Structure probing data (2A3 and DMS) for a 177-nucleotide construct.

[RMDB]
RNA sequence: GGGAACGACUCGAGUAGAGUCGAAAAAUCUACGGCUGCGAUGUCCCGGACGUGGAGCGCUUCGUCUACGACUUCUCUGAACUGGGGCGGUCGUUCGACCUGCCUGUGGUCACCUACGCCAACAGCACAUUAAUUUAGCGUUCGCGCUAAAUUAAUGAAAAGAAACAACAACAACAAC
Reactivity to 2A3 in 0.01 (KOAc 150mM, MgCl2 10mM, bicine 150mM(pH8.5), 24C), signal-to-noise 4, nucleotides 027 to 126: a000u040c040u040a030c020g020g000c010u030g000c030g050a080u080g040u070c020c020c000g020g050a060c030g050u070g020g030a040g060c060g000c020u080u090c050g070u020c030u050a050c030g070a120c030u060u030c020u000c020u040g120a220a110c070u100g000g010g000g030c010g010g020u000c010g030u060u100c050g020a020c000c010u050g020c000c000u040g040u060g020g010u020c010a030c060c010u040a030c060g000c000c010a050a020c020a050g030c030a020
Reactivity to DMS in 0.01 (KOAc 150mM, MgCl2 10mM, bicine 150mM(pH8.5), 24C), signal-to-noise 6, nucleotides 027 to 126: a080u010c050u010a090c070g000g010c030u000g010c090g000a070u010g010u000c020c020c020g010g010a080c080g020u000g010g010a070g010c080g020c050u000u000c100g000u000c040u010a080c050g000a060c030u000u000c020u000c020u000g010a100a080c140u010g000g010g000g010c030g010g010u000c020g010u000u000c100g010a040c020c030u010g010c040c020u000g020u000g020g000u000c040a060c040c020u000a090c090g000c030c020a050a070c120a090g020c120a210

The RNA was probed in 150 mM KOAc, 10 mM MgCl2 and 150 mM bicine (pH 8.5) at 24 C. 2A3 adducts were read by reverse transcription with SuperScript II with manganese. For DMS the reverse transcriptase was MarathonRT. In probing experiments dimethyl sulfate is read out at A N1 and C N3, which are open when not base-paired. It was measured as part of the RMDB library OK2TST.